[RMDB]
RNA sequence: GGGAACGACUCGAGUAGAGUCGAAAAGAUAUGGACAUCAAGAACGAUAAGUCGAUCAUCGGAAACGAUGAUUCGACUUUUGACGUUCGAAGUGUCCUAAGUCAAAAGCGCUAAGUUCGCUUAGCGCGCCGACCCUACACUUCGGUGUAGGGUCGGCAAAAGAAACAACAACAACAAC
Reactivity to DMS in 0.01 (KOAc 150mM, MgCl2 10mM, bicine 150mM(pH8.5), 24C), signal-to-noise 1, nucleotides 027 to 126: g000a030u000a300u000g000g000a010c010a020u000c000a070a300g000a000a000c000g010a180u020a000a000g030u000c000g030a040u000c000a010u000c020g060g000a150a100a110c000g000a000u010g000a000u000u000c000g000a030c000u000u000u000u000g030a130c050g020u000u000c000g010a120a200g010u000g000u000c000c000u000a040a120g030u000c020a140a070a170a100g000c000g030c000u000a000a000g000u000u000c300g010c000u000u030a000g000c000g080c000